Structure probing data (2A3 and DMS) for a 177-nucleotide construct.
[RMDB]
RNA sequence: GGGAACGACUCGAGUAGAGUCGAAAAGAAAGUCCCCGGAUCUCGGGUAGAAAGUGCCGUGCGCUACUAUGGCGUGCAAUAAUCCCGCCCUGCUGUCCAUAUCAACCCGCCAAGAAGCUCCCAGAGCGUCGAGGGGAUAAUUCGUUAUCCCCUCGACAAAAGAAACAACAACAACAAC
Reactivity to 2A3 in 0.01 (KOAc 150mM, MgCl2 10mM, bicine 150mM(pH8.5), 24C), signal-to-noise 4, nucleotides 027 to 126: g050a000a070a000g100u070c010c020c000c000g060g030a120u020c080u030c050g030g000g000u050a040g100a090a200a000g090u090g080c070c010g010u050g010c040g000c020u150a110c010u100a130u230g040g000c010g020u020g000c000a000a100u120a070a040u080c000c000c010g000c010c000c010u020g010c010u030g030u030c010c010a030u030a020u150c010a020a070c010c010c020g010c010c000a000a060g060a040a010g020c000u020c010c010c020a010g010a010g050c090
Reactivity to DMS in 0.01 (KOAc 150mM, MgCl2 10mM, bicine 150mM(pH8.5), 24C), signal-to-noise 2, nucleotides 027 to 126: g000a230a170a050g000u030c000c000c000c060g000g000a070u010c050u010c060g040g030g020u000a040g010a070a080a040g000u010g000c040c090g050u030g070c080g000c020u010a040c220u020a030u020g010g030c030g070u000g000c010a140a130u040a090a110u010c000c010c010g030c020c010c070u000g010c020u000g020u000c020c040a070u030a100u000c120a060a070c020c010c000g000c070c010a090a150g000a060a160g020c070u020c020c000c010a060g000a160g010c210
For DMS, 2,295 sequencing reads were counted.
For 2A3, 2,617 sequencing reads were counted.
2A3 adducts were read by reverse transcription with SuperScript II with manganese.
The RNA was probed in 150 mM KOAc, 10 mM MgCl2 and 150 mM bicine (pH 8.5) at 24 C.